The data come from the RNA Mapping Database (RMDB), library OK3TST. Chemical mapping of a 207-nucleotide RNA with DMS and 2A3.

RNA sequence: GGGAACGACUCGAGUAGAGUCGAAAAACAAGGUGACCGGCCUGAGCUUGUCCCCUGGCUCAGACAUUCACUAGCUGUGUGGGCUUGAAUGAGUCAUGGAAACUUUCUGUGUCUCAGUUUCCUUAUCUGCAAAGUGGACAUAAUACUCAUCUAAAAAGAUUUACUGAGGAUUCGUCCUCAGUAAAUCAAAAGAAACAACAACAACAAC
Reactivity to DMS in 0.01 (KOAc 150mM, MgCl2 10mM, bicine 150mM(pH8.5), 24C), signal-to-noise 2, nucleotides 027 to 156: a100c060a060a100g010g010u010g000a050c090c050g040g040c020c020u000g020a020g010c000u000u020g020u000c000c000c010c040u000g010g000c050u000c010a050g000a120c020a220u000u020c030a070c030u000a190g000c050u010g000u010g020u000g010g020g040c140u000u000g020a070a070u010g020a070g000u000c050a070u000g000g010a050a070a120c080u000u010u000c010u000g010u000g000u000c000u000c010a060g010u010u000u010c020c000u010u000a120u010c070u000g020c060a100a060a130g040u010g000g010a090c050a080u010a050a110u000a060c090u010c030a090u000c040u010a040a070a060a090a180
Reactivity to 2A3 in 0.01 (KOAc 150mM, MgCl2 10mM, bicine 150mM(pH8.5), 24C), signal-to-noise 5, nucleotides 027 to 156: a000c070a050a020g010g000u030g020a040c030c070g050g000c010c010u010g000a010g000c000u040u060g030u080c020c000c000c040u020g010g000c000u000c000a000g000a040c030a030u060u040c000a010c040u050a040g000c030u030g020u020g020u080g110g040g000c030u040u080g060a100a080u050g000a020g010u020c010a020u010g000g030a030a160a140c080u110u170u010c020u070g030u010g020u000c000u010c020a050g020u010u130u050c020c000u060u130a140u080c030u050g020c030a090a030a060g010u020g020g020a000c020a020u170a080a030u060a130c060u050c060a070u110c060u270a030a170a110a000a150
About this RNA: For 2A3 the reverse transcriptase was SuperScript II with manganese. The DMS profile rests on 3,381 reads.